RNA sequence: GGGAACGACUCGAGUAGAGUCGAAAAUCGUUUUGAAGGAAAUAUGAGUGAAAUCAGAAGGACAAUCGUCGUUUUGAUGAUAUACCUUCGCCUCUUUAGAGUAAGGACGAUCUUCAGAGUUGAGUCUCCCCUGCAUUAAGUUCGCUUAAUGCAGGGGAAAAGAAACAACAACAACAAC
Reactivity to 2A3 in 0.01 (KOAc 150mM, MgCl2 10mM, bicine 150mM(pH8.5), 24C), signal-to-noise 1, nucleotides 027 to 126: u040c030g000u000u000u010u070g090a030a000g010g080a000a130a010u280a130u110g040a060g010u180g110a080a090a110u160c080a110g020a030a010g010g020a010c150a070a100u060c030g000u000c080g030u040u100u240u300g000a010u020g000a000u010a000u010a030c000c000u000u000c000g030c010c000u000c010u110u120u080a000g010a010g030u020a030a030g000g000a000c000g000a040u010c010u060u020c090a010g060a040g040u100u050g020a020g030u040c010u040